This 177-nucleotide RNA was probed chemically with 2A3 and DMS.
The reactions ran in a buffer of 150 mM KOAc, 10 mM MgCl2 and 150 mM bicine (pH 8.5), at 24 C.
For 2A3, 32,904 sequencing reads were counted.
As a SHAPE reagent, 2A3 marks flexible, mostly unpaired nucleotides at the ribose 2'-OH.
Reactivities are rounded to 0.1 and cut off at 0 and 3.
High DMS reactivity at an A or C suggests that its Watson-Crick edge is free.
[RMDB]
RNA sequence: GGGAACGACUCGAGUAGAGUCGAAAAAAGUUGCACCAGGUACGGAUACCAGACGUUGCCAAACAGGGUGACAUGAGGAUCACCCAUGUACUGUCCCUUGCCAGCCGUACCUGGUGCUGGUGAAAAAAUGUACGUUUAUAUUCGUAUAAACGUACAUAAAAGAAACAACAACAACAAC
Reactivity to 2A3 in 0.01 (KOAc 150mM, MgCl2 10mM, bicine 150mM(pH8.5), 24C), signal-to-noise 9, nucleotides 027 to 126: a010a000g230u120u040g000c000a000c000c000a000g000g000u010a000c000g000g010a050u070a190c030c020a010g020a040c040g060u090u090g080c040c020a090a100a040c040a050g010g000g010u010g010a010c030a090u300g140a120g130g050a090u020c010a030c000c000c000a020u030g020u020a050c050u060g040u040c020c010c020u020u060g050c020c020a020g010c010c010g000u000a000c000c000u000g000g000u000g000c000u000g000g000u070g070a100a030a000a010a000
Reactivity to DMS in 0.01 (KOAc 150mM, MgCl2 10mM, bicine 150mM(pH8.5), 24C), signal-to-noise 9, nucleotides 027 to 126: a070a070g000u010u000g010c010a010c000c000a010g000g010u000a010c010g000g000a120u010a100c150c100a130g010a060c070g010u010u000g010c080c080a070a080a080c080a060g000g000g010u000g000a010c030a130u010g010a130g010g010a190u000c030a010c010c000c000a040u000g010u000a080c120u000g000u000c010c030c030u000u010g010c070c070a120g000c000c000g000u000a010c010c000u000g000g000u000g010c000u000g000g000u000g000a000a020a070a050a080